[RMDB]
RNA sequence: GGGAACGACUCGAGUAGAGUCGAAAAUAUUUUCUAAUUGAGAAAGUGGUAUUAAUUGUGUUAAUGCUAAACAAAUAUCCUCAGUUGUAAAUUCACGUUUUUCAUAAAAAGCAUGGUACAUUGCUUCUAUAGAAAUACUUUUCGAAGUAUUUCUAUAAAAAGAAACAACAACAACAAC
Reactivity to DMS in 0.01 (KOAc 150mM, MgCl2 10mM, bicine 150mM(pH8.5), 24C), signal-to-noise 1, nucleotides 027 to 126: u010a030u000u000u000u000c010u010a060a040u000u030g000a040g010a060a110a130g000u000g000g000u000a010u000u000a000a040u010u010g000u020g000u000u000a000a020u000g000c050u000a070a100a130c110a060a100a130u000a070u000c090c030u000c040a020g000u000u000g030u000a040a050a060u000u000c120a050c110g010u000u000u010u000u000c080a080u000a050a060a080a050a050g000c010a020u000g010g040u010a070c130a110u000u000g000c010u000u000c130

The record gives the reactivity of an RNA of 177 nucleotides to DMS. The RNA was probed in 150 mM KOAc, 10 mM MgCl2 and 150 mM bicine (pH 8.5) at 24 C. It was measured as part of the RMDB library OK2TST.